[RMDB]
RNA sequence: GGGAACGACUCGAGUAGAGUCGAAAAGGAACUCAAUGUCUGAUUCUUGACAGGGUCAAGAAACAAGGACCGUAUGGCAUUGUUUAGUGGUUAAGACUUUGUAGCCAGGUUGCAUGCAUUCAAAAUCUGACCCUACCACCUACUAGUUGUGGUAAUACUUUCUUAUCCGGUUCGCCGGAUAAGAAAGAAAAGAAACAACAACAACAAC
Reactivity to 2A3 in 0.01 (KOAc 150mM, MgCl2 10mM, bicine 150mM(pH8.5), 24C), signal-to-noise 2, nucleotides 027 to 156: g070g000a040a000c040u050c050a050a070u080g020u040c050u060g080a200u060u020c000u040u030g030a060c080a190g160g060g000u040c010a000a080g010a070a030a050c120a070a140g110g030a070c050c040g080u070a110u150g030g000c030a030u040u100g030u000u180u060a080g000u150g080g000u070u020a130a010g040a090c040u050u120u110g070u070a050g020c080c060a030g090g080u100u160g000c110a140u050g000c020a070u030u130c100a050a030a040a070u090c030u000g050a070c000c000c000u030a030c020c010a000c000c040u150a150c050u110a120g050u050u020g000u020g040g040u050a020a000u050a070